An RNA of 177 nucleotides, treated with 2A3 and DMS and read out base by base. The RNA was probed in 150 mM KOAc, 10 mM MgCl2 and 150 mM bicine (pH 8.5) at 24 C. DMS adducts were read by reverse transcription with MarathonRT. For 2A3, 1,650 sequencing reads were counted. 2A3 adducts were read by reverse transcription with SuperScript II with manganese. The data come from the RNA Mapping Database (RMDB), library OK1LIB.

RNA sequence: GGGAACGACUCGAGUAGAGUCGAAAACUACCUGCUGUACCGAAACACGCACGGGGCCGCCGACGAUAGCGACCGCGCUCCGGUCACGUUCGGGGAUCUGCUGGGCCGGCUGCCCCGCUACCUGGCGCGUUAAACCUGGGUUCGCCCAGGUUUAACGAAAAGAAACAACAACAACAAC
Reactivity to 2A3 in 0.01 (KOAc 150mM, MgCl2 10mM, bicine 150mM(pH8.5), 24C), signal-to-noise 2, nucleotides 027 to 126: c030u060a070c000c010u060g020c040u090g000u020a060c000c020g060a090a030a010c110a010c070g050c020a000c060g020g000g000g000c010c060g060c000c000g010a070c030g110a220u110a010g010c010g010a020c020c000g050c040g000c060u000c020c000g010g040u140c110a090c160g070u070u060c020g000g000g000g060a120u030c020u110g030c020u020g000g070g010c020c000g000g000c000u030g010c010c000c000c000g000c000u020a050c010c000u010g080g030c030g020
Reactivity to DMS in 0.01 (KOAc 150mM, MgCl2 10mM, bicine 150mM(pH8.5), 24C), signal-to-noise 1, nucleotides 027 to 126: c040u000a080c000c040u000g020c040u060g020u030a010c070c020g000a050a040a000c070a110c090g000c080a070c050g000g010g000g000c050c150g000c000c000g000a030c020g000a120u090a000g020c030g010a040c080c000g000c140g000c100u000c040c040g000g040u010c110a100c060g000u000u000c000g020g000g000g000a110u030c030u030g050c010u020g030g000g000c020c000g000g000c030u040g000c000c000c000c000g040c020u000a020c090c080u040g000g000c010g000